The record gives the reactivity of an RNA of 177 nucleotides to DMS and 2A3. Reactivities are given for positions 27 through 126.

RNA sequence: GGGAACGACUCGAGUAGAGUCGAAAAAGGAUUCCCCUAGUAACGGCGAGCGAACCGGGACCAGCCCAGCUUGAGAAUCGGGUGGCUUCGUCACCUGAAUUGUAGUCUGGAGAGGCGUCCUCAGCGAACAAAGAGGAAACUUCGGUUUCCUCUUUGUAAAAGAAACAACAACAACAAC
Reactivity to DMS in 0.01 (KOAc 150mM, MgCl2 10mM, bicine 150mM(pH8.5), 24C), signal-to-noise 6, nucleotides 027 to 126: a120g000g020a300u000u000c010c000c000c080u010a060g010u000a060a060c050g000g010c060g010a110g010c030g010a100a090c110c120g000g000g000a050c040c040a150g000c060c020c020a070g000c050u020u030g000a120g010a070a120u000c000g010g000g020u000g010g000c020u040u050c210g010u000c000a000c010c000u000g010a040a060u000u000g000u020a040g000u020c010u010g000g000a140g000a130g000g010c090g000u000c020c000u000c040a090g000c090g020a110
Reactivity to 2A3 in 0.01 (KOAc 150mM, MgCl2 10mM, bicine 150mM(pH8.5), 24C), signal-to-noise 7, nucleotides 027 to 126: a000g110g010a050u060u040c000c000c000c010u040a030g050u100a150a030c040g060g000c030g030a040g010c040g020a030a010c040c020g040g000g000a040c030c030a020g050c010c000c000a010g020c020u080u100g110a050g090a140a080u030c000g000g000g010u010g000g010c020u160u110c240g020u010c000a000c000c000u020g040a080a050u050u040g070u060a040g030u040c010u020g030g030a070g020a060g090g030c030g020u020c000c010u030c020a060g050c040g030a040